[RMDB]
RNA sequence: GGGAACGACUCGAGUAGAGUCGAAAAGAUAUGGAGAGAAGAGCUCGAAGAACAUAUGGAGGCUCGGAAACGAGUGAAGUAUGGGAGAGCACUUCUCUCCUAAGUCAAACUGCACUUCGGUGCAGAACUCUUCACUUAUCUUCGGAUAAGUGAAGAGAAAAGAAACAACAACAACAAC
Reactivity to DMS in 0.01 (KOAc 150mM, MgCl2 10mM, bicine 150mM(pH8.5), 24C), signal-to-noise 3, nucleotides 027 to 126: g020a020u010a300u000g010g000a070g030a010g010a020a010g000a080g020c020u000c010g000a120a150g010a130a160c000a000u000a010u000g010g000a300g000g000c030u000c000g000g010a030a090a090c000g030a010g020u000g010a300a170g010u010a010u010g000g000g020a040g000a000g030c000a070c020u000u000c000u000c000u010c000c000u010a000a030g010u000c030a040a140a260c000u000g020c000a020c000u000u020c210g000g000u000g040c000a000g020a060a100
Reactivity to 2A3 in 0.01 (KOAc 150mM, MgCl2 10mM, bicine 150mM(pH8.5), 24C), signal-to-noise 2, nucleotides 027 to 126: g020a010u070a020u120g000g000a010g000a010g010a030a000g000a010g000c000u000c020g140a220a070g010a060a020c000a010u040a000u040g060g050a100g300g130c000u010c000g010g000a020a020a000c000g000a000g020u230g040a140a050g020u010a000u010g000g000g000a050g000a000g000c010a000c000u000u000c000u000c010u000c000c000u000a000a000g000u000c000a020a000a110c010u000g000c000a010c000u040u080c300g170g000u000g000c000a000g000a000a010

Structure probing data (DMS and 2A3) for a 177-nucleotide construct. Conditions: 150 mM KOAc, 10 mM MgCl2 and 150 mM bicine (pH 8.5), 24 C.